[RMDB]
RNA sequence: GGGAACGACUCGAGUAGAGUCGAAAAUGCACGCGCUGAUUCGUCAGCGCGUGCAGACGGGCAAAGCGUGAGGCUGGUUUCACAGAGCAGCGACAACCUCCCUCUCCUUGCAGUGGAAGGAUAACAAAUGCUCAAGAAAUCUUCGGAUUUCUUGAGCGACGUAAUCGUAUUUCGAUACGAUUACGUCAAAAGAAACAACAACAACAAC
Reactivity to 2A3 in 0.01 (KOAc 150mM, MgCl2 10mM, bicine 150mM(pH8.5), 24C), signal-to-noise 3, nucleotides 027 to 156: u040g000c000a000c000g030c000g020c010u000g030a020u030u090c120g040u010c120a010g050c070g000c000g000u010g000c000a000g000a000c050g010g040g010c090a090a080a030g020c050g030u030g020a020g020g000c030u040g040g090u070u180u110c150a170c040a060g100a050g070c050a010g050c010g070a030c090a020a060c010c000u020c010c000c020u010c020u000c000c020u040u060g080c060a080g030u110g080g040a100a070g020g070a120u120a130a010c060a030a070a110u300g000c000u010c000a000a000g020a000a000a000u000c020u040u080c250g060g000a000u000u000u000c000u000u000g000a000g000c000
Reactivity to DMS in 0.01 (KOAc 150mM, MgCl2 10mM, bicine 150mM(pH8.5), 24C), signal-to-noise 1, nucleotides 027 to 156: u010g020c000a010c000g060c000g040c000u010g010a040u000u000c300g000u010c000a010g060c000g020c010g040u000g020c040a000g000a010c060g000g030g010c060a060a080a130g020c040g020u010g010a070g010g010c020u010g040g000u000u000u000c030a200c060a200g000a140g050c100a130g030c040g000a060c090a080a060c030c010u000c030c010c020u010c030u000c000c050u000u010g010c080a100g030u000g030g020a080a060g000g000a100u000a080a130c070a030a070a120u010g030c020u000c000a000a010g000a010a000a020u000c000u000u000c300g060g000a030u000u000u000c000u000u010g000a000g030c000